[RMDB]
RNA sequence: GGGAACGACUCGAGUAGAGUCGAAAAUGAAGCAAAUCCAUAAUUGCCAAUGAUGAGCAAAUCGCUAUUGCCGCCUAAAAACGGUUAGCCGGGGCUGCUAGAGCCUUGUUACCAAAGAUAGCCGGCGUUACGGCAUGAUGGUUCGCCAUCAUGCCAAUCAAUGAUACUCGUUCGCGAGUAUCAUUGAAAAAGAAACAACAACAACAAC
Reactivity to 2A3 in 0.01 (KOAc 150mM, MgCl2 10mM, bicine 150mM(pH8.5), 24C), signal-to-noise 4, nucleotides 027 to 156: u130g010a050a010g040c040a030a040a100u080c050c010a030u100a150a110u180u060g010c010c030a090a100u190g070a100u100g020a100g010c020a000a110a090u140c050g000c060u050a080u070u130g000c000c000g000c000c010u050a060a030a020a010a000c030g000g020u030u030a030g020c000c050g030g000g020g000c020u060g030c070u110a030g020a000g200c000c000u000u040g050u040u080a050c030c040a050a050a030g040a030u020a020g030c020c040g010g010c020g070u120u100a030c070g000g000c000a000u000g010a000u000g000g050u030u050c210g030c050c000a000u000c010a000u000g010c000c000a000a000
Reactivity to DMS in 0.01 (KOAc 150mM, MgCl2 10mM, bicine 150mM(pH8.5), 24C), signal-to-noise 2, nucleotides 027 to 156: u000g020a110a130g000c030a040a090a110u010c040c050a060u000a090a160u020u010g040c000c040a110a150u000g020a090u010g010a190g030c020a030a030a060u000c070g010c040u010a060u020u010g040c000c000g000c030c030u030a070a070a070a110a060c030g010g000u010u010a050g020c040c010g020g020g000g020c020u000g030c040u020a050g020a050g000c010c010u010u010g010u010u000a130c040c050a070a130a080g000a130u000a080g020c010c090g020g020c040g040u000u010a080c130g020g000c000a000u000g020a010u000g010g020u000u000c300g040c010c000a010u000c010a000u000g020c000c000a000a010